[RMDB]
RNA sequence: GGGAACGACUCGAGUAGAGUCGAAAAAAAAAAAGAUAUGGAUUGAACUACGUCGUAGUUAGCGUUGAAACUGUCUCGGAAACGAGACAGUGGAGCUAAUGAUCGACGCAAUCCUAAGUCAAAAAAACAUUCAGUAAUAGUUCGCUAUUACUGAAUGAAAAGAAACAACAACAACAAC
Reactivity to DMS in 0.01 (KOAc 150mM, MgCl2 10mM, bicine 150mM(pH8.5), 24C), signal-to-noise 3, nucleotides 027 to 126: a000a000a010a060a070a100a130g000a030u000a300u010g010g000a020u000u000g010a130a060c170u010a300c020g000u000c000g010u000a300g000u000u000a010g010c000g000u000u010g000a060a100a010c000u010g000u000c000u000c000g000g010a080a070a120c010g010a010g000a000c020a010g000u000g000g000a050g010c000u000a000a000u000g000a180u020c000g000a010c010g000c010a010a010u010c000c000u010a040a130g010u020c020a010a000a100a070a050a050a160
Reactivity to 2A3 in 0.01 (KOAc 150mM, MgCl2 10mM, bicine 150mM(pH8.5), 24C), signal-to-noise 3, nucleotides 027 to 126: a000a000a000a010a000a020a010g080a070u140a030u180g000g020a010u030u020g040a180a050c150u190a070c300g000u010c010g020u000a030g000u000u010a000g030c060g220u300u030g000a020a030a000c000u000g000u010c000u000c000g010g020a080a090a050c010g000a000g000a000c000a000g000u000g000g000a000g000c000u020a010a010u060g020a060u300c000g020a000c010g000c000a000a010u010c000c010u010a160a030g050u060c080a060a050a000a030a040a040a150

The record gives the reactivity of an RNA of 177 nucleotides to DMS and 2A3. Conditions: 150 mM KOAc, 10 mM MgCl2 and 150 mM bicine (pH 8.5), 24 C. It was measured as part of the RMDB library TTRDES.